[RMDB]
RNA sequence: GGGAACGACUCGAGUAGAGUCGAAAAGAUAUGGAAAGAACUACAGCGGUAGUGGCGAAGAACUCGGAAACGAGGGAGCCAUUUCCGCUGCUUUCCUAAGUCAAAGUCCGUCCUUCGGGACGGACAAGAAGAUACAAGACUUCGGUCUUGUAUCUUCAAAAGAAACAACAACAACAAC
Reactivity to 2A3 in 0.01 (KOAc 150mM, MgCl2 10mM, bicine 150mM(pH8.5), 24C), signal-to-noise 3, nucleotides 027 to 126: g010a030u070a040u100g000g000a010a000a000g020a060a060c110u230a100c300a010g000c010g000g010u050a000g010u010g010g000c040g170a300a010g000a110a020c000u000c000g020g040a060a060a030c010g000a010g000g000g000a010g000c000c000a000u020u020u000c010c010g000c020u000g010c000u010u000u000c000c000u010a150a010g040u020c040a130a050a010g010u010c000c010g000u020c010c010u030u050c260g060g000g000a000c000g000g000a000c000a000a000
Reactivity to DMS in 0.01 (KOAc 150mM, MgCl2 10mM, bicine 150mM(pH8.5), 24C), signal-to-noise 2, nucleotides 027 to 126: g000a020u000a300u010g010g000a010a010a020g000a060a030c070u030a300c010a010g010c000g010g020u000a010g050u000g000g000c000g030a100a120g000a100a230c000u000c010g000g020a110a090a190c000g000a020g000g000g000a050g030c010c000a010u000u000u000c000c000g000c020u000g000c000u000u000u000c000c000u000a030a120g020u000c050a080a130a130g010u000c000c000g000u000c000c000u000u000c210g010g000g000a010c010g000g000a000c010a010a030
Structure probing data (2A3 and DMS) for a 177-nucleotide construct.